[RMDB]
Chemical mapping of a 207-nucleotide RNA with 2A3. Source: RMDB library M2RFPK, as collected in RNAgym.
RNA sequence: GGGAACGACUCGAGUAGAGUCGAAAAAGCCACCGCUACUGCGGUGGCAAGUAGAAAAGUUGGUGCUUAGACCACGCCCUCUACCGUAAUAAUAGAUAAAUAGGCGAGUAUCAGUACGCUGAUACAAAAAACACUCACACGUUCGCGUGUGAGUGAAGGUGUAUUGGAAGUUCGCUUCCAAUACACCAAAAGAAACAACAACAACAAC
Reactivity to 2A3 in 0.01 (KOAc 150mM, MgCl2 10mM, bicine 150mM(pH8.5), 24C), signal-to-noise 2, nucleotides 027 to 156: a000g000c010c000a010c000c030g010c110u300a160c210u300g010c040g030g000u020g000g000c000a000a010g020u010a000g010a020a030a000a040g050u120u010g030g020u050g030c140u300u070a030g060a070c000c000a010c000g000c000c030c000u000c000u000a070c070c040g020u020a030a080u020a140a010u060a180g090a000u110a080a170a020u090a030g030g070c040g030a010g010u000a000u000c000a000g040u010a030c180g000c050u000g000a000u010a020c050a010a240a000a000a000a000c000a000c000u020c000a000c000a000c000g030u100u080c180g010c000g070u020g000u000g000a000g000u000g000a000a000